[RMDB]
RNA sequence: GGGAACGACUCGAGUAGAGUCGAAAAGAUAUGGAGACUAAGACGCCUCUACCCACCUCGGAAACGAGAGGAGGAACUACGUCAAAGUCUCCUAAGUCAAAGCGUCAACGGUUCGCCGUUGACGCAAGGAUACUGAACACUUCGGUGUUCAGUAUCCAAAAGAAACAACAACAACAAC
Reactivity to 2A3 in 0.01 (KOAc 150mM, MgCl2 10mM, bicine 150mM(pH8.5), 24C), signal-to-noise 1, nucleotides 027 to 126: g070a000u160a080u280g000g000a030g000a000c000u040a080a030g020a000c020g060c020c050u000c020u110a210c000c050c060a090c020c000u000c000g000g000a150a070a050c030g000a040g000a080g050g040a070g050g000a130a040c190u300a050c290g020u010c010a080a000a000g000u010c000u040c000c000u000a170a000g070u040c100a180a000a000g030c000g010u020c000a010a000c000g010g090u050u100c280g090c100c000g000u000u000g000a000c010g000c000a000a010
Reactivity to DMS in 0.01 (KOAc 150mM, MgCl2 10mM, bicine 150mM(pH8.5), 24C), signal-to-noise 1, nucleotides 027 to 126: g060a070u000a280u000g030g000a130g030a010c000u010a030a300g000a010c000g000c100c000u010c060u000a160c090c000c040a300c210c010u000c000g000g000a090a100a260c070g090a000g010a110g010g040a110g000g000a040a060c070u000a280c000g000u000c000a070a250a030g010u000c030u000c000c000u000a000a000g000u000c030a090a110a110g000c000g020u000c010a000a070c010g000g010u000u000c300g050c000c020g020u030u050g000a000c000g010c000a010a000
The record gives the reactivity of an RNA of 177 nucleotides to 2A3 and DMS. The reactions ran in a buffer of 150 mM KOAc, 10 mM MgCl2 and 150 mM bicine (pH 8.5), at 24 C.